[RMDB]
RNA sequence: GGGAACGACUCGAGUAGAGUCGAAAAUAGGGAGGCGUGAGCGCGGAAGCAGCAUAUUGUGAAUGGCGGCGACGACAGCGUGCAGUGCUGCUGCCCGAAGGCCGCCAUCAGCGUUAAGGAUGACCAAAGCUAAUUACUCGUUCGCGAGUAAUUAGCUAAAAGAAACAACAACAACAAC
Reactivity to DMS in 0.01 (KOAc 150mM, MgCl2 10mM, bicine 150mM(pH8.5), 24C), signal-to-noise 3, nucleotides 027 to 126: u020a090g000g000g000a030g000g000c050g000u010g000a040g020c000g010c040g000g000a100a070g030c040a030g010c070a080u000a110u030u020g040u000g000a150a060u000g000g010c010g010g010c060g040a180c150g030a160c060a000g000c000g000u030g000c080a110g000u030g010c030u040g020c000u000g010c030c050c010g010a080a070g020g010c010c000g000c020c000a010u000c010a110g000c070g020u000u010a080a120g000g000a100u020g000a140c030c090a060a100
Reactivity to 2A3 in 0.01 (KOAc 150mM, MgCl2 10mM, bicine 150mM(pH8.5), 24C), signal-to-noise 3, nucleotides 027 to 126: u200a010g020g040g000a040g040g030c070g020u090g050a030g020c090g000c000g070g000a030a020g050c060a000g000c040a020u070a090u140u300g080u030g090a100a060u040g000g000c000g000g000c000g050a050c040g000a030c040a020g060c010g090u050g010c060a070g040u040g080c020u150g000c000u010g000c030c040c010g000a100a020g140g000c000c000g000c000c000a000u000c000a000g010c010g040u060u090a090a030g030g040a110u060g030a030c080c010a090a090